[RMDB]
RNA sequence: GGGAACGACUCGAGUAGAGUCGAAAACUACGCGGAAAAUUAUGAUAGUGCUUGUUGAUAAUUGCCGGUCGGCGCUCUUGACGCACUUGUUGCAAUACCGAAUAACCCUGUGCAUCAGCAAAGUUAGCCAUGAGUUGAUUUUCGAAUCAACUCAUGGAAAAGAAACAACAACAACAAC
Reactivity to 2A3 in 0.01 (KOAc 150mM, MgCl2 10mM, bicine 150mM(pH8.5), 24C), signal-to-noise 1, nucleotides 027 to 126: c020u110a000c030g020c050g120g020a050a090a090a110u190u110a110u230g050a080u030a050g030u030g060c020u030u120g050u000u000g000a010u070a150a050u090u110g020c050c040g090g090u180c120g000g040c010g020c030u000c040u020u090g040a030c020g000c030a010c010u020u060g040u050u060g030c020a020a120u010a140c000c060g010a030a060u020a040a050c000c010c010u010g030u050g000c000a090u030c020a030g070c050a080a040a190g040u130u180a010g020
Reactivity to DMS in 0.01 (KOAc 150mM, MgCl2 10mM, bicine 150mM(pH8.5), 24C), signal-to-noise 2, nucleotides 027 to 126: c040u010a070c180g000c030g010g010a090a070a060a100u020u000a060u000g000a080u000a060g010u000g010c080u000u000g020u000u000g010a030u000a070a080u000u010g020c020c000g020g000u010c090g070g020c030g010c070u000c050u010u010g000a130c070g010c050a020c040u000u000g000u000u000g030c090a040a100u010a110c070c030g000a090a080u000a100a110c030c010c010u010g000u000g040c050a050u000c050a060g000c060a060a050a100g010u000u000a090g000

This 177-nucleotide RNA was probed chemically with 2A3 and DMS.
The reactions ran in a buffer of 150 mM KOAc, 10 mM MgCl2 and 150 mM bicine (pH 8.5), at 24 C.